An RNA of 177 nucleotides, treated with DMS and 2A3 and read out base by base. The RNA was probed in 150 mM KOAc, 10 mM MgCl2 and 150 mM bicine (pH 8.5) at 24 C. The 2A3 profile rests on 1,486 reads. 2A3 adducts were read by reverse transcription with SuperScript II with manganese.
RNA sequence: GGGAACGACUCGAGUAGAGUCGAAAAGUGAACCGGCUCGCCCGGGGAGCGGAGGGGGGCCGCAGUGAAGAGGCCCAAGCGACUGUUUACCAAAAACACAGGACUCUGCAUAAGCCGCGAGGCGACGACUCUAAGAAUUGUUCGCAAUUCUUAGAGUAAAAGAAACAACAACAACAAC
Reactivity to DMS in 0.01 (KOAc 150mM, MgCl2 10mM, bicine 150mM(pH8.5), 24C), signal-to-noise 2, nucleotides 027 to 126: g040u000g000a110a250c040c010g020g000c080u020c050g000c020c010c010g050g020g000g000a120g010c020g010g000a060g010g030g000g000g000g020c000c010g010c050a080g020u030g030a140a160g000a130g010g000c020c000c030a090a090g010c110g010a110c080u000g000u000u000u000a190c190c110a030a050a060a090a070c050a070c050a080g040g000a160c010u000c010u000g000c010a120u000a100a160g020c010c000g000c130g000a100g020g030c030g000a080c100g010
Reactivity to 2A3 in 0.01 (KOAc 150mM, MgCl2 10mM, bicine 150mM(pH8.5), 24C), signal-to-noise 2, nucleotides 027 to 126: g070u020g030a100a070c000c000g060g030c030u030c050g000c000c000c000g040g000g020g010a040g000c020g000g020a020g000g050g000g020g030g080c030c030g000c050a040g030u090g180a150a060g050a080g040g020c000c000c020a020a020g090c060g110a110c050u050g000u050u070u060a130c060c020a140a050a050a050a030c070a000c020a000g030g010a040c020u010c010u050g000c000a040u030a270a020g100c010c000g140c030g040a100g000g020c000g000a030c030g000